[RMDB]
RNA sequence: GGGAACGACUCGAGUAGAGUCGAAAAUGUAACAUCCGGCUGGAAUGUAUUUGGUACACUUCACCAACUGCGUGUAGCCACACUGUCGAAUACACGCACUAAUGAUGAAAACGUACGGCACGUUAGCAAAAGGAAAGAUUUUCGAAUCUUUCCUUUUAAAAGAAACAACAACAACAAC
Reactivity to DMS in 0.01 (KOAc 150mM, MgCl2 10mM, bicine 150mM(pH8.5), 24C), signal-to-noise 9, nucleotides 027 to 126: u030g010u020a070a150c080a050u010c020c060g000g020c140u000g010g010a080a050u010g010u000a050u020u030u020g010g020u010a040c060a100c100u010u000c010a030c030c030a070a140c300u000g000c000g020u000g000u000a010g010c170c050a090c100a130c170u030g000u020c090g020a140a110u000a010c000a000c000g000c010a030c080u010a100a090u020g000a040u000g010a050a030a080a100c110g000u010a040c030g000g020c040a060c110g010u010u010a060g010c150
Reactivity to 2A3 in 0.01 (KOAc 150mM, MgCl2 10mM, bicine 150mM(pH8.5), 24C), signal-to-noise 9, nucleotides 027 to 126: u180g030u070a040a020c010a060u020c030c040g060g020c070u070g030g120a110a060u070g040u110a120u090u160u170g110g010u060a020c070a020c070u040u030c020a010c030c010a040a040c030u030g000c020g010u010g010u020a030g070c070c010a070c030a030c070u160g040u200c040g030a020a000u020a010c010a000c010g030c010a010c010u040a080a080u130g080a010u040g070a030a070a040a010c070g030u100a020c000g040g020c040a020c100g050u060u070a050g030c090
Source: RMDB library OK1LIB, as collected in RNAgym.
Chemical mapping of a 177-nucleotide RNA with DMS and 2A3.
The reactions ran in a buffer of 150 mM KOAc, 10 mM MgCl2 and 150 mM bicine (pH 8.5), at 24 C.
2A3 is a SHAPE reagent: it acylates the 2'-hydroxyl of flexible nucleotides of all four kinds.
Values cover nucleotides 27 to 126.
The DMS profile rests on 44,179 reads.